[RMDB]
RNA sequence: GGGAACGACUCGAGUAGAGUCGAAAACCGUGCACUCUGGAAUAAGCUUGAGAAACUGGGUCUAAUACCAGAUAUGACGGCAUGCCGCAUAAUGUGUCAUGGAAAGAUUUAUCGGUGCACGAUGGGCAAUAUUAUUGAAAUUCGUUUCAAUAAUAUUAAAAGAAACAACAACAACAAC
Reactivity to 2A3 in 0.01 (KOAc 150mM, MgCl2 10mM, bicine 150mM(pH8.5), 24C), signal-to-noise 9, nucleotides 027 to 126: c010c000g000u010g000c000a010c000u100c080u140g050g060a070a030u030a040a010g020c010u030u040g050a020g020a090a100a030c000u010g000g000g030u040c070u120a040a030u080a110c000c000a000g010a020u070a020u050g050a030c020g020g040c010a010u040g040c020c030g060c040a050u110a170a090u300g050u020g010u030c000a010u010g060g040a070a050a020g030a010u010u050u050a080u110c010g010g000u010g000c010a000c000g010a040u080g030g010g020c010
Reactivity to DMS in 0.01 (KOAc 150mM, MgCl2 10mM, bicine 150mM(pH8.5), 24C), signal-to-noise 9, nucleotides 027 to 126: c040c000g020u000g000c000a010c010u010c110u020g020g020a110a040u000a060a090g010c030u010u000g000a200g010a110a120a130c030u000g000g000g000u010c130u030a130a000u040a100c010c010a010g000a110u020a030u010g000a100c090g010g010c020a020u010g000c050c040g010c050a110u020a070a070u020g010u000g000u000c000a010u000g010g000a090a050a040g000a070u010u010u010a030u010c050g000g010u000g010c000a010c010g000a090u020g000g010g010c140